[RMDB]
RNA sequence: GGGAACGACUCGAGUAGAGUCGAAAAGCGGUGGAUACCGCCAUCAUUCGGGCGUCACGGGAAAGUCAUCGACGAUUGCUUGACGACGGUCGUGGGGCGCGAACUGUGAGCGUAAAACUCCGAAUGGCGGAUUUUAGGAUCGAAUCGCGUUCAGCAACAUCCGAUUUACUUUCGAGUAAAUCGGAUGAAAAGAAACAACAACAACAAC
Reactivity to DMS in 0.01 (KOAc 150mM, MgCl2 10mM, bicine 150mM(pH8.5), 24C), signal-to-noise 1, nucleotides 027 to 156: g010c010g010g000u030g030g030a160u000a100c000c010g050c000c000a000u020c040a130u000u000c020g000g000g010c010g000u000c040a110c030g000g040g010a160a080a170g030u010c000a080u010c040g000a070c000g000a220u000u000g020c060u030u000g040a030c030g000a020c000g020g030u000c030g020u020g030g010g010g030c010g000c030g010a070a130c060u000g050u030g010a050g090c030g000u000a110a090a110a060c020u000c000c020g010a140a050u000g000g090c010g040g000a090u050u000u000u020a120g010g000a100u010c050g020a110a060u000c000g020c040g020u000u000c050a070g000c020a160a140
Reactivity to 2A3 in 0.01 (KOAc 150mM, MgCl2 10mM, bicine 150mM(pH8.5), 24C), signal-to-noise 3, nucleotides 027 to 156: g000c010g010g000u060g020g050a040u040a230c000c000g010c000c000a020u010c010a010u020u000c010g010g110g000c120g300u060c020a020c020g020g040g060a160a050a040g030u010c000a090u050c030g150a060c050g070a170u070u230g050c090u060u130g030a080c030g010a050c040g080g050u040c000g000u020g000g000g040g000c170g000c060g050a010a020c020u060g060u090g110a040g010c020g040u070a070a110a040a080c020u000c020c020g030a090a040u010g000g000c000g010g000a030u090u030u080u300a080g040g020a030u010c020g010a120a000u000c030g000c010g040u110u150c080a070g030c040a030a090
The record gives the reactivity of an RNA of 207 nucleotides to DMS and 2A3. The reactions ran in a buffer of 150 mM KOAc, 10 mM MgCl2 and 150 mM bicine (pH 8.5), at 24 C. For DMS, 2,633 sequencing reads were counted.